[RMDB]
RNA sequence: GGGAACGACUCGAGUAGAGUCGAAAAUGGCUAUUCGUAGCCAGCAAAACCUUUGUGAUUUCGAGGAUCUAAUGGCACGCUUUGCCCAUUGGGCAAAGGACUGUGCCAUACGAUCCUAAGACAGAAUCACUCUGGUAUCUCGAGCAUUCGUGCUCAAGGUAUCUCCGUGUUUCGACACGGAGAUACCAAAAGAAACAACAACAACAAC
Reactivity to 2A3 in 0.01 (KOAc 150mM, MgCl2 10mM, bicine 150mM(pH8.5), 24C), signal-to-noise 1, nucleotides 027 to 156: u000g000g000c000u000a000u030u050c220g100u080a020g000c020c020a000g010c010a020a110a040a040c000c000u080u010u000g010u020g000a030u000u080u190c020g030a000g020g000a000u000c020u120a140a000u030g010g010c000a000c000g020c000u070u000u000g060c000c070c050a300u300u300g010g000g000c000a000a000a000g050g020a100c030u300g000u020g050c030c000a000u000a000c000g000a000u010c000c000u000a000a030g060a030c000a000g000a000a000u000c000a000c000u020c000u000g000g040u080a120u030c160u110c150g000a000g000c000a050u120u180c090g100u020g020c000u000c060a030a100

An RNA of 207 nucleotides, treated with 2A3 and read out base by base. The data come from the RNA Mapping Database (RMDB), library RNAMAK.